The record gives the reactivity of an RNA of 207 nucleotides to 2A3 and DMS. Reactivities are rounded to 0.1 and cut off at 0 and 3. DMS adducts were read by reverse transcription with MarathonRT. The reactions ran in a buffer of 150 mM KOAc, 10 mM MgCl2 and 150 mM bicine (pH 8.5), at 24 C. The 2A3 profile rests on 3,723 reads.
RNA sequence: GGGAACGACUCGAGUAGAGUCGAAAAUUGCAUCAUUUCCAGUGCUUUUUGUUCCAUGAUGCGCAAGUCAUUUAAGGCCAUUUCUUCAUCGUCUAUUUUAUAGAUUCUGAAUAACAUAGGCAAAACAUUAUAAUCAAAACCGUAAGCACCAGCGCCAUACUACUAUCCGAUUCGUCGGAUAGUAGUAAAAAGAAACAACAACAACAAC
Reactivity to 2A3 in 0.01 (KOAc 150mM, MgCl2 10mM, bicine 150mM(pH8.5), 24C), signal-to-noise 6, nucleotides 027 to 156: u110u070g000c020a020u010c010a010u060u070u110c070c040a030g010u020g060c060u060u070u050u130u180g060u050u040c030c020a040u080g020a020u040g020c030g000c090a080a030g040u080c050a070u060u100u250a060a040g090g000c000c010a040u030u050u000c040u030u040c010a020u030c030g020u000c010u020a070u030u170u080u110a080u040a040g020a050u080u000c020u030g020a040a010u040a050a030c060a080u050a060g020g010c030a050a050a040a040c020a060u130u170a100u130a260a100u110c080a030a090a030a080c040c020g030u030a050a020g010c010a010c030c020a020g040c010g000c060c000a020
Reactivity to DMS in 0.01 (KOAc 150mM, MgCl2 10mM, bicine 150mM(pH8.5), 24C), signal-to-noise 4, nucleotides 027 to 156: u000u000g010c040a080u020c060a090u000u010u010c040c050a160g010u000g060c030u000u000u010u000u010g020u000u000c030c050a150u010g030a050u000g020c050g010c090a120a090g010u000c050a090u000u010u010a120a110g000g040c020c020a140u000u010u000c080u010u000c020a030u000c060g020u000c010u010a050u000u000u010u000a110u000a070g010a070u010u000c100u000g020a080a050u010a060a090c090a060u000a080g040g050c020a080a080a070a080c070a070u000u000a100u000a070a100u000c010a040a050a050a080c070c030g000u000a050a100g020c010a040c010c020a090g020c010g000c020c040a240